[RMDB]
RNA sequence: GGGAACGACUCGAGUAGAGUCGAAAACAAACACCAGCGAAAAGGAAGAAAAACCAAAACGUGAACUACUUGACGAAACACGAACGCUGGUGUAAAUCGUCAAGAAACAAAAACAAAACAAACAAAACAUGAGCUAAGUCUUCGGACUUAGCUCAUGAAAAGAAACAACAACAACAAC
Reactivity to 2A3 in 0.01 (KOAc 150mM, MgCl2 10mM, bicine 150mM(pH8.5), 24C), signal-to-noise 2, nucleotides 027 to 126: c010a000a030a000c000a000c000c010a030g000c000g010a060a030a030a030g120g020a110a150g250a080a250a000a010a000c020c030a000a020a000a030c120g010u050g160a070a090c070u250a050c000u100u000g000a000c000g000a050a150a000c010a090c010g010a050a000c020g020c000u000g000g000u000g000u000a010a010a000u020c000g000u000c010a010a010g050a190a020a030c210a060a030a100a000a000c050a000a120a000a070c050a000a100a000c060a020a080a040a000

Chemical mapping of a 177-nucleotide RNA with 2A3. For 2A3 the reverse transcriptase was SuperScript II with manganese. Values cover nucleotides 27 to 126. The RNA was probed in 150 mM KOAc, 10 mM MgCl2 and 150 mM bicine (pH 8.5) at 24 C.